This 207-nucleotide RNA was probed chemically with 2A3. The reactions ran in a buffer of 150 mM KOAc, 10 mM MgCl2 and 150 mM bicine (pH 8.5), at 24 C.
[RMDB]
RNA sequence: GGGAACGACUCGAGUAGAGUCGAAAAUCUACGUUCGCGUAGAAAAAAAACCUUUGUGUUAGGAGGUAUGGUUGCCUCGGCGGAUCCCAUUGGGAUCCGGCCGAUAAGCAUACUACCCACCCUAACACUCUGGUAAAAACGCGACUUCGGUCGCGAAGUGAAGGUAACUGUUCGCAGUUACCUUCACAAAAGAAACAACAACAACAAC
Reactivity to 2A3 in 0.01 (KOAc 150mM, MgCl2 10mM, bicine 150mM(pH8.5), 24C), signal-to-noise 3, nucleotides 027 to 156: u000c000u010a010c010g010u040u070c300g020c060g050u050a020g220a060a020a010a000a000a000a000a050c030c000u040u000u010g010u010g000u000u000a000g000g010a020g020g010u030a050u210g100g040u050u010g020c010c030u000c000g000g000c010g000g000a020u010c000c070c170a300u300u300g000g000g020a000u010c000c010g020g080c000c000g000a000u030a010a020g010c010a020u060a300c000u010a000c010c000c000a150c010c000c000u000a000a000c000a000c000u020c000u010g000g010u080a110a060a010a010a030c000g000c000g010a000c000u040u090c300g100g000u000c000g010c020g060a150a020